[RMDB]
RNA sequence: GGGAACGACUCGAGUAGAGUCGAAAACUUAUUGUAUUCAGCUGACAGAUAUCAAUCCACUCUCCAGCGCCACUGCUAUUGAGGAAUUGAACCUUAACGGUUGUCGCCGAAUAACACGAGGGAUAGGACAGCGGACGUAAUUCGUUACGUCCGCUGUAAAAGAAACAACAACAACAAC
Reactivity to 2A3 in 0.01 (KOAc 150mM, MgCl2 10mM, bicine 150mM(pH8.5), 24C), signal-to-noise 3, nucleotides 027 to 126: c000u100u030a120u290u220g100u020a090u080u060c030a000g030c040u150g100a040c040a000g200a240u150a020u130c020a000a010u000c010c010a050c090u050c000u000c030c000a000g000c010g000c070c100a040c030u090g020c000u070a070u040u090g000a000g000g000a060a060u050u080g080a140a120c000c000u090u110a110a010c070g030g000u000u020g020u040c000g010c020c000g070a090a010u120a160a000c050a010c030g060a090g000g040g030a060u060a080g130g000
Reactivity to DMS in 0.01 (KOAc 150mM, MgCl2 10mM, bicine 150mM(pH8.5), 24C), signal-to-noise 1, nucleotides 027 to 126: c010u000u000a020u000u000g010u010a050u040u000c030a050g070c080u020g010a140c120a040g030a040u000a040u040c080a170a070u000c020c050a130c100u000c040u000c000c010a000g060c110g010c130c060a060c000u000g020c070u010a060u000u000g050a060g030g020a020a050u030u010g040a100a100c040c020u000u000a120a050c130g000g010u000u000g010u000c020g000c020c000g020a030a030u000a000a010c050a030c110g010a070g000g000g000a080u010a070g000g000
Chemical mapping of a 177-nucleotide RNA with 2A3 and DMS. For DMS the reverse transcriptase was MarathonRT. It was measured as part of the RMDB library OK1LIB. Values cover nucleotides 27 to 126.